[RMDB]
RNA sequence: GGGAACGACUCGAGUAGAGUCGAAAAGUGGGCAGCCAACAAAUCCCUUUCCUUACCAGAUGUGCGGAGAUGAGAGGCUAGACUGAGUGAUAACAGUGGAAGUGGAAAAGGAGGGAGUCCACCGCUCCUUGGGAUGAGUAAUCCAUGGGCUUUGUUAAUCAUAUGAUUAGUUCGCUAAUCAUAUGAUAAAAGAAACAACAACAACAAC
Reactivity to DMS in 0.01 (KOAc 150mM, MgCl2 10mM, bicine 150mM(pH8.5), 24C), signal-to-noise 3, nucleotides 027 to 156: g010u010g020g020g030c070a090g000c050c050a070a140c050a100a090a140u000c010c000c010u000u000u030c020c020u000u000a130c060c050a110g020a120u000g010u000g020c090g020g010a100g020a080u010g010a100g000a090g050g010c060u000a090g030a110c050u000g000a120g010u000g000a140u000a070a070c050a080g000u000g020g010a060a120g030u010g010g000a050a040a070a100g030g000a070g020g010g020a120g010u000c010c050a130c000c000g020c010u000c000c030u000u000g010g000g020a050u010g000a190g000u000a130a120u000c010c010a090u010g010g020g020c080u010u000u010g010u010u000a100
Reactivity to 2A3 in 0.01 (KOAc 150mM, MgCl2 10mM, bicine 150mM(pH8.5), 24C), signal-to-noise 6, nucleotides 027 to 156: g060u060g000g020g020c040a040g070c040c040a050a040c060a040a120a090u100c000c000c000u010u040u030c030c000u070u040a100c030c010a060g000a180u090g090u060g090c050g040g040a040g010a060u140g030a040g010a020g070g040c030u040a020g030a050c030u030g020a020g060u080g050a090u060a260a040c040a040g020u040g040g050a050a030g040u100g010g020a050a060a040a020g040g010a030g010g020g010a010g020u000c020c020a020c000c040g040c020u040c000c000u010u080g050g000g000a040u060g010a050g100u170a040a020u020c010c010a040u030g030g000g000c030u050u050u040g020u010u100a060